Structure probing data (2A3 and DMS) for a 207-nucleotide construct. For 2A3, 5,419 sequencing reads were counted. For DMS, 4,163 sequencing reads were counted.
[RMDB]
RNA sequence: GGGAACGACUCGAGUAGAGUCGAAAAGCUAGUCGGAGACGACUAGCAUCGAUCAGUUCGCUGAUCGUAAGGAGCAGUCAUGCGCAGUCGACGCUCCGAUAGGCAUGGCAGACUGCGAUACUGUAAAAUCAGGAUAAUUAAUUAAUGAAGCCAUGCGCCAUAGCUAGCGAUUCGUCGCUAGCUAUGGAAAAGAAACAACAACAACAAC
Reactivity to 2A3 in 0.01 (KOAc 150mM, MgCl2 10mM, bicine 150mM(pH8.5), 24C), signal-to-noise 6, nucleotides 027 to 156: g010c000u000a000g000u000c000g010g030a040g020a110c000g010a000c000u000a000g010c000a010u040c000g000a000u000c000a010g040u060u090c160g040c070u000g000a000u000c000g000u010a070a070g020g000a010g000c100a040g090u070c020a030u190g020c000g000c020a010g000u040c020g010a020c030g020c010u000c000c010g010a130u100a060g030g000c000a000u000g000g010c000a000g020a040c000u000g000c000g010a010u030a050c000u010g030u090a020a040a070a210u150c010a000g050g030a040u060a160a080u300u130a090a060u150u070a050a080u140g060a050a000g000c000c000a000u000g000c000g000
Reactivity to DMS in 0.01 (KOAc 150mM, MgCl2 10mM, bicine 150mM(pH8.5), 24C), signal-to-noise 2, nucleotides 027 to 156: g010c010u000a030g000u010c010g070g000a300g010a300c020g020a000c010u000a000g030c020a020u000c020g000a000u000c000a030g000u000u000c300g050c010u000g010a020u000c000g010u000a070a130g010g000a060g040c000a190g000u020c050a130u000g010c060g040c030a060g000u000c020g010a080c050g010c000u000c040c000g010a130u000a060g020g020c010a010u000g010g020c020a280g000a080c000u000g060c040g020a150u010a040c030u000g000u000a080a070a110a170u000c000a020g020g010a210u000a030a110u000u020a070a140u010u000a080a110u010g000a140a160g010c000c000a020u000g000c010g000
DMS adducts were read by reverse transcription with MarathonRT.